Record summary: Chemical mapping of a 207-nucleotide RNA with 2A3. For 2A3, 767 sequencing reads were counted. The reactions ran in a buffer of 150 mM KOAc, 10 mM MgCl2 and 150 mM bicine (pH 8.5), at 24 C. 2A3 adducts were read by reverse transcription with SuperScript II with manganese.
RNA sequence: GGGAACGACUCGAGUAGAGUCGAAAAUGUGGGCUUGGCUGACCGCAAGACUUGGACGCAAAAGUACGCAGGCGCAUGGAGCGUUCGAUGACCUGCACGCGAGGUUCAGCACGGAUGAGUAGCCUUGAACUGCAAUCAGCAGUAAGAGGUUAUCCCCGGCUGGACCAUAAUUCGUUAUGGUCCAGCCAAAAGAAACAACAACAACAAC
Reactivity to 2A3 in 0.01 (KOAc 150mM, MgCl2 10mM, bicine 150mM(pH8.5), 24C), signal-to-noise 2, nucleotides 027 to 156: u160g040u130g020g020g050c060u030u090g080g000c000u000g000a020c020c010g000c080a110a000g050a040c040u060u050g050g000a060c070g010c050a120a120a000a000g030u100a040c150g000c000a030g010g100c030g000c040a050u090g060g050a050g020c040g030u080u090c020g020a060u100g020a040c000c030u030g000c050a020c030g000c010g040a040g040g000u060u090c010a010g040c020a050c010g030g040a050u090g030a020g060u010a000g040c020c000u010u010g020a040a050c000u020g030c010a040a300u110c110a300g000c000a020g000u010a020a040g010a000g000g000u000u080a010u050c000c000c000c000